[RMDB]
RNA sequence: GGGAACGACUCGAGUAGAGUCGAAAAGAUAUGGACUAUAGCCCGCUGCAUAACUAUUCGGAAACGAACGAAUUAUGAACUACAGCUCUAUAGUCCUAAGUCAAACGAUCUUCUUCGGAAGAUCGAACAGAUGUGCUAAGUUCGCUUAGCACAUCUGAAAAGAAACAACAACAACAAC
Reactivity to DMS in 0.01 (KOAc 150mM, MgCl2 10mM, bicine 150mM(pH8.5), 24C), signal-to-noise 2, nucleotides 027 to 126: g000a050u010a290u010g010g010a000c000u000a000u000a010g000c300c140c300g030c010u010g000c020a020u000a030a040c090u000a280u000u010c010g010g000a040a050a220c060g000a010a060c080g010a050a040u000u000a010u000g000a060a060c130u010a200c020a010g010c020u010c000u000a020u000a010g010u000c000c000u000a020a080g010u000c060a040a090a140c010g010a010u000c000u000u000c000u000u010c160g010g000a000a000g000a000u000c000g000a050a130
Reactivity to 2A3 in 0.01 (KOAc 150mM, MgCl2 10mM, bicine 150mM(pH8.5), 24C), signal-to-noise 3, nucleotides 027 to 126: g020a020u050a040u090g000g010a000c000u010a000u000a010g020c060c200c140g070c030u040g020c010a000u010a050a050c060u120a200u170u050c000g000g060a060a080a070c030g010a000a020c040g010a130a090u040u010a010u040g030a090a030c130u270a180c300a040g000c010u030c010u060a030u010a000g000u000c020c000u010a010a010g030u000c050a120a090a070c020g010a010u000c000u010u000c000u030u050c250g150g010a010a000g000a010u020c000g000a040a010
Structure probing data (DMS and 2A3) for a 177-nucleotide construct. It was measured as part of the RMDB library TTRDEL.